RNA sequence: GGGAACGACUCGAGUAGAGUCGAAAAGAAUAUAAAGCGCGAGGGACCAAUUGCGAGCGACCUCGCGCGACCAGCUGUCGACUCACCAAGCGCGCAGCCAGCUGGAGGUUACGCUCGCAACAGAAGAGCUAAAUAGCGGCUUCGGCCGCUAUUUAGCAAAAGAAACAACAACAACAAC
Reactivity to 2A3 in 0.01 (KOAc 150mM, MgCl2 10mM, bicine 150mM(pH8.5), 24C), signal-to-noise 1, nucleotides 027 to 126: g000a000a020u250a030u240a300a050a020g000c020g000c000g000a000g110g000g010a050c040c040a170a160u170u070g000c060g000a000g000c000g000a000c000c000u000c060g010c000g000c000g020a000c000c000a000g050c000u000g000u040c020g030a290c000u030c000a000c050c060a150a000g060c040g010c020g150c200a000g130c040c000a000g000c030u060g000g010a000g060g050u110u160a050c020g000c000u000c000g140c000a000a000c000a000g100a080a000g090a000
This 177-nucleotide RNA was probed chemically with 2A3. Values are in units of 0.01, from 0 to 300, in steps of 10. Reactivities are given for positions 27 through 126. The RNA was probed in 150 mM KOAc, 10 mM MgCl2 and 150 mM bicine (pH 8.5) at 24 C.